[RMDB]
RNA sequence: GGGAACGACUCGAGUAGAGUCGAAAACUUCAAUGGUUCGCCAUUGAAGAAACAUGGUAAACGCUGACACCAUGAAAGAUCGAAAAACGAUCAAAGCGAAAAAAAGUAGUCAGUUCGCUGACUACAAUCCUAAUGUUUGCUUCGGCAAACAUUAGGAAAAAGAAACAACAACAACAAC
Reactivity to DMS in 0.01 (KOAc 150mM, MgCl2 10mM, bicine 150mM(pH8.5), 24C), signal-to-noise 1, nucleotides 027 to 126: c020u000u000c000a020a000u000g000g090u000u020c170g000c000c010a000u000u000g010a000a000g000a080a060a160c000a020u000g010g000u000a060a060a050c000g010c070u020g020a300c290a020c000c000a070u040g000a030a020a150g000a000u000c000g000a020a130a140a090a300c030g000a010u000c000a050a060a090g000c030g000a000a000a050a070a090a010a190g010u000a000g000u000c010a020g000u010u020c200g030c000u000g000a010c000u000a000c000a050a070
The record gives the reactivity of an RNA of 177 nucleotides to DMS. The reactions ran in a buffer of 150 mM KOAc, 10 mM MgCl2 and 150 mM bicine (pH 8.5), at 24 C. Values cover nucleotides 27 to 126.